[RMDB]
The data come from the RNA Mapping Database (RMDB), library M2RFPK. An RNA of 207 nucleotides, treated with 2A3 and DMS and read out base by base. Reactivities are given for positions 27 through 156. 2A3 adducts were read by reverse transcription with SuperScript II with manganese. The DMS profile rests on 4,176 reads.
RNA sequence: GGGAACGACUCGAGUAGAGUCGAAAAACGAGGUACGCCUCGAAAAUAUGACCGGUGUCGUAGCCUCUAGCACACAGAGGUCGCGUGGGUUCAACUCCCCCCCUUUUCCGAGGGUAUCGGAAACCAAAAAACACAAUUUGGUUCGCCAAAUUGUGAAGUAUACACAAUACUUCGGUAUUGUGUAUACAAAAGAAACAACAACAACAAC
Reactivity to 2A3 in 0.01 (KOAc 150mM, MgCl2 10mM, bicine 150mM(pH8.5), 24C), signal-to-noise 7, nucleotides 027 to 156: a020c000g000a000g000g010u060a030c170g070c020c010u010c000g050a070a030a020a020u210a120u120g030a020c030c020g080g060u120g090u190c020g000u020a060g010c010c010u000c010u040a090g070c120a050c020a010c010a170g010a000g000g010u050c010g000c000g010u080g060g020g000u120u160c050a060a110c070u030c000c000c000c000c000c000c020u010u090u000u000c000c000g000a000g010g010g010u090a020u010c000g000g000a000a000a010c020c020a040a040a020a040a050a000c010a000c000a010a000u000u000u000g020g000u020u040c080g030c050c000a000a000a000u000u000g000u000g000a010a000
Reactivity to DMS in 0.01 (KOAc 150mM, MgCl2 10mM, bicine 150mM(pH8.5), 24C), signal-to-noise 3, nucleotides 027 to 156: a130c010g000a060g040g050u010a080c190g050c020c020u020c000g030a040a070a060a110u000a050u010g000a070c020c030g000g020u000g060u000c020g040u010a080g040c000c000u000c030u000a120g030c090a110c130a130c080a130g000a050g020g030u010c020g050c050g050u000g010g000g000u000u010c070a130a300c090u000c010c000c000c000c010c020c010u000u000u000u000c010c020g010a040g000g020g020u010a060u000c030g030g000a010a050a090c130c050a000a020a050a090a100a200c000a010c010a030a010u000u000u000g010g020u000u010c300g000c010c000a020a010a010u000u010g000u000g010a000a060